RNA sequence: GGGAACGACUCGAGUAGAGUCGAAAAAACAUUAACCUUUGCGCAGUUAUACUACUCCAACUACUUGGUAGUGAUUUGUUGCAAAUAAUACAUCUGUAAUAUCUCAACUUGCCAUAAUCAUCAUCAGGCUCGCCAUCUAUAAUAAUCCAAGGCAUUAACUAAUUGCUCCGUUCGCGGAGCAAUUAGUAAAAGAAACAACAACAACAAC
Reactivity to 2A3 in 0.01 (KOAc 150mM, MgCl2 10mM, bicine 150mM(pH8.5), 24C), signal-to-noise 1, nucleotides 027 to 156: a000a000c030a030u040u000a100a100c050c000u000u000u010g010c000g000c010a030g010u080u090a190u010a230c060u000a010c000u110c200c000a220a190c080u220a040c030u100u130g130g000u000a000g000u000g000a000u080u030u020g060u140u100g060c010a010a010a000u130a040a110u060a090c100a060u050c010u050g100u080a120a050u040a100u280c030u030c010a060a160c040u010u010g060c000c000a050u060a180a050u140c030a040u010c010a000u050c050a110g010g030c050u010c060g000c000c010a000u000c110u080a060u050a130a130u060a090a040u060c090c000a150a030g000g000c000a010u170u110a010